[RMDB]
RNA sequence: GGGAACGACUCGAGUAGAGUCGAAAAACGGGAAUUUCUACUUCGACAAGGCCUCCCGCCCGGCCCAGCGGAAGUAUCGCGUCCUCGCCCUCGGCAAGGACGGCGACGGCCCCGACGCGGUCUACGUGGCCCGCUGGCUGCCGAACGCCCAGGUCACCAUUAAGCAAGUCUUCGGACUUGCUUAAUGAAAAGAAACAACAACAACAAC
Reactivity to 2A3 in 0.01 (KOAc 150mM, MgCl2 10mM, bicine 150mM(pH8.5), 24C), signal-to-noise 1, nucleotides 027 to 156: a020c010g000g000g050a080a050u000u260u020c030u120a200c090u160u160c070g110a050c100a200a070g010g010c030c020u000c000c010c000g000c010c040c030g010g000c000c000c000a000g000c000g030g020a150a030g020u120a060u070c010g000c000g010u050c000c030u010c020g050c030c000c040u090c120g040g000c070a100a090g060g000a060c080g040g000c030g010a020c050g090g000c020c010c000c050g020a040c030g030c060g110g020u050c030u040a050c030g100u070g060g020c050c000c000g000c000u010g000g000c020u070g000c000c000g040a050a020c080g010c050c000c010a010g000g020u010c000a010c070
Structure probing data (2A3) for a 207-nucleotide construct. 2A3 adducts were read by reverse transcription with SuperScript II with manganese. The RNA was probed in 150 mM KOAc, 10 mM MgCl2 and 150 mM bicine (pH 8.5) at 24 C. 2A3 is a SHAPE reagent: it acylates the 2'-hydroxyl of flexible nucleotides of all four kinds.